RNA sequence: GGGAACGACUCGAGUAGAGUCGAAAAGAUAUGGAAUCUGAAUGCUCGAUAAGUCUAUCGGAAACGAUCAGACUUUUGACGAGCGCGAUUCCUAAGUCAAACUACUUAAAGUUCGCUUUAAGUAGAAGGUAUCAAUAUUCUUCGGAAUAUUGAUACCAAAAGAAACAACAACAACAAC
Reactivity to DMS in 0.01 (KOAc 150mM, MgCl2 10mM, bicine 150mM(pH8.5), 24C), signal-to-noise 5, nucleotides 027 to 126: g000a040u000a300u010g000g010a010a000u010c000u030g030a080a100u000g020c000u000c000g010a130u000a010a010g010u000c000u000a040u000c000g010g010a080a080a130c000g010a000u000c230a000g000a010c000u000u010u010u010g010a120c070g000a010g010c000g020c060g000a010u000u000c000c010u000a020a080g000u000c030a090a110a300c010u000a000c000u000u000a000a000a010g010u000u010c230g010c010u000u000u000a000a010g010u000a000g010a080a060
Reactivity to 2A3 in 0.01 (KOAc 150mM, MgCl2 10mM, bicine 150mM(pH8.5), 24C), signal-to-noise 4, nucleotides 027 to 126: g000a000u040a020u100g010g010a020a010u020c050u140g090a300a140u300g010c000u010c030g110a170u010a140a000g000u000c000u010a010u010c000g010g000a070a010a020c010g000a010u050c060a010g000a000c000u040u010u030u090g170a080c020g000a000g000c010g000c000g000a000u010u000c000c000u000a060a000g010u010c020a030a130a120c010u020a000c000u010u020a040a000a000g020u050u140c250g130c080u000u010u000a000a010g010u000a010g020a040a030